[RMDB]
RNA sequence: GGGAACGACUCGAGUAGAGUCGAAAACGAGGCUAACCAGUGGUAUCCGAGUCUGUACGAGGGCACCACGCCGGUCGAGGUGAACCGCACGCCCGAGGAGGGUUACCAUUUCAUGGCGGACAUGACCUGUCAUGGACACAUUCGUGUGUCCAUGACAAAAAGAAACAACAACAACAAC
Reactivity to 2A3 in 0.01 (KOAc 150mM, MgCl2 10mM, bicine 150mM(pH8.5), 24C), signal-to-noise 2, nucleotides 027 to 126: c030g030a030g020g040c020u030a030a020c010c050a060g000u040g030g000u010a050u000c000c040g020a030g040u130c140u300g130u230a080c030g010a020g000g000g020c000a010c030c000a010c010g000c030c000g060g070u030c020g020a070g040g030u080g000a040a070c020c020g080c020a040c020g070c000c020c000g000a080g110g090a060g000g000g000u050u080a060c070c030a060u040u110u190c110a090u160g060g000c050g000g060a040c010a090u120g050a070c030c080
Reactivity to DMS in 0.01 (KOAc 150mM, MgCl2 10mM, bicine 150mM(pH8.5), 24C), signal-to-noise 2, nucleotides 027 to 126: c080g000a180g010g030c100u000a100a050c100c060a110g010u000g000g000u010a000u010c000c000g000a300g010u000c120u010g030u030a080c030g020a300g000g000g020c090a010c010c030a040c010g000c110c150g000g000u000c070g000a130g020g010u000g010a050a040c010c030g020c030a120c100g000c070c010c020g000a130g000g000a230g000g000g020u000u030a050c060c030a120u010u030u000c130a040u000g010g020c010g000g030a160c100a040u000g000a050c180c040